[RMDB]
RNA sequence: GGGAACGACUCGAGUAGAGUCGAAAACUGUACUUGACAAGUCUAAAAAUGCCUAAACUAUUUUCCGUUAUUGGAUUGAUGUUUUCUGGAGGCUUUUUUUGUCACCUUUCACUCAGCUAACAUCUCUACAGCAAUAACCACAUUUCAGCACACGAGAUAAUAUCAGUAGCUUCGGCUACUGAUAUUAAAAAGAAACAACAACAACAAC
Reactivity to 2A3 in 0.01 (KOAc 150mM, MgCl2 10mM, bicine 150mM(pH8.5), 24C), signal-to-noise 1, nucleotides 027 to 156: c020u050g040u130a000c040u030u000g030a030c000a090a040g010u030c020u160a150a080a020a000a000u100g030c010c000u020a050a060a030c050u060a280u110u080u090u040c020c010g070u130u080a090u080u220g000g000a000u010u010g010a010u040g000u020u040u020u000c060u110g120g020a030g070g000c000u130u040u020u030u010u170u100g050u020c020a080c030c030u020u260u200c010a040c000u070c010a000g000c040u090a080a000c010a070u010c000u000c030u080a110c050a060g030c020a030a110u020a040a080c030c030a020c020a060u070u220u160c060a070g100c010a010c040a000c150g060a050g030a190